Chemical mapping of a 207-nucleotide RNA with DMS and 2A3.
For 2A3 the reverse transcriptase was SuperScript II with manganese.

[RMDB]
RNA sequence: GGGAACGACUCGAGUAGAGUCGAAAAAGUCCAUAUGCCCAUCUUUGCUGGGGCGGAUGGAUGUUUAUACCCGCUAUGGAUGCCUAUUACUGAAAUGUAAUAGAUGCCUAAUACUCUCUCUCAGGGAGAGAGUUUAGAUGCCUCCAAAGCUUAUGCUUAGUCAUCAUAUAUUCGUAUAUGAUGACUAAAAAGAAACAACAACAACAAC
Reactivity to DMS in 0.01 (KOAc 150mM, MgCl2 10mM, bicine 150mM(pH8.5), 24C), signal-to-noise 3, nucleotides 027 to 156: a110g010u000c000c010a010u000a100u000g010c010c000c010a140u010c080u000u000u010g040c110u000g040g000g000g010c000g010g000a060u000g010g000a020u010g030u020u000u000a160u010a160c030c010c010g030c120u000a160u000g000g010a060u000g010c060c020u010a020u010u000a020c000u010g000a180a140a200u000g000u000a000a030u000a050g000a160u000g020c040c030u000a030a040u010a050c000u000c000u010c000u000c010u010c120a300g030g020g000a030g000a020g010a010g010u000u000u000a020g020a140u000g010c030c040u000c010c020a040a130a120g010c030u000u010a110u010g010c100u000
Reactivity to 2A3 in 0.01 (KOAc 150mM, MgCl2 10mM, bicine 150mM(pH8.5), 24C), signal-to-noise 5, nucleotides 027 to 156: a000g000u000c000c000a000u020a010u040g010c000c010c000a130u060c150u220u300u270g140c200u200g030g000g010g010c010g000g000a000u010g000g000a000u020g010u010u230u000a060u060a060c000c000c010g030c000u030a050u060g030g000a000u010g000c000c000u000a000u010u010a010c000u030g080a080a110a130u200g000u010a000a010u000a000g010a020u100g020c000c010u030a060a020u140a160c000u010c000u000c000u000c010u030c170a150g070g300g010a000g000a000g000a010g010u000u000u000a000g000a000u040g000c000c010u000c010c000a040a070a000g020c020u200u160a130u290g040c020u000
Source information: Conditions: 150 mM KOAc, 10 mM MgCl2 and 150 mM bicine (pH 8.5), 24 C. For 2A3, 2,783 sequencing reads were counted. DMS adducts were read by reverse transcription with MarathonRT. Reactivities are rounded to 0.1 and cut off at 0 and 3. Reactivities are given for positions 27 through 156.